An RNA of 177 nucleotides, treated with 2A3 and DMS and read out base by base. For 2A3 the reverse transcriptase was SuperScript II with manganese.
RNA sequence: GGGAACGACUCGAGUAGAGUCGAAAACUGGAGCGUCUUGGCCUGCAACGCUUUAUUCGCACGAAGCAGGAAAUCAACAAGGAAGCGAUUUUACUGGAACCGAAAGCGGUCGCAGGCGUUGCCGGAAUACACGUGAGAUAUUCGUAUCUCACGUGUAAAAAGAAACAACAACAACAAC
Reactivity to 2A3 in 0.01 (KOAc 150mM, MgCl2 10mM, bicine 150mM(pH8.5), 24C), signal-to-noise 2, nucleotides 027 to 126: c030u060g100g030a070g070c010g000u010c050u110u100g120g040c020c020u000g000c020a050a010c030g060c000u000u120u150a170u080u080c020g000c050a080c080g050a080a020g030c020a000g040g000a000a010a000u050c030a030a140c080a150a150g300g060a070a050g140c030g010a030u000u020u000u060a300c000u030g010g100a080a060c020c000g010a050a030a030g020c000g030g070u120c070g000c040a050g000g050c020g090u070u010g000c010c000g040g020a050a030
Reactivity to DMS in 0.01 (KOAc 150mM, MgCl2 10mM, bicine 150mM(pH8.5), 24C), signal-to-noise 4, nucleotides 027 to 126: c040u010g000g000a110g020c070g010u000c030u000u010g020g030c010c000u020g000c020a070a100c010g010c000u010u000u010a130u020u010c070g020c110a170c160g020a110a150g010c000a040g020g000a040a010a010u000c040a080a200c170a090a150g010g010a120a110g020c190g010a020u000u000u000u000a120c000u000g000g010a130a120c180c030g000a030a050a040g000c000g010g000u000c100g010c080a010g000g000c010g000u000u000g010c020c040g000g000a110a190

Source: RMDB library OK2TRN, as collected in RNAgym.
For 2A3, 1,668 sequencing reads were counted.
DMS adducts were read by reverse transcription with MarathonRT.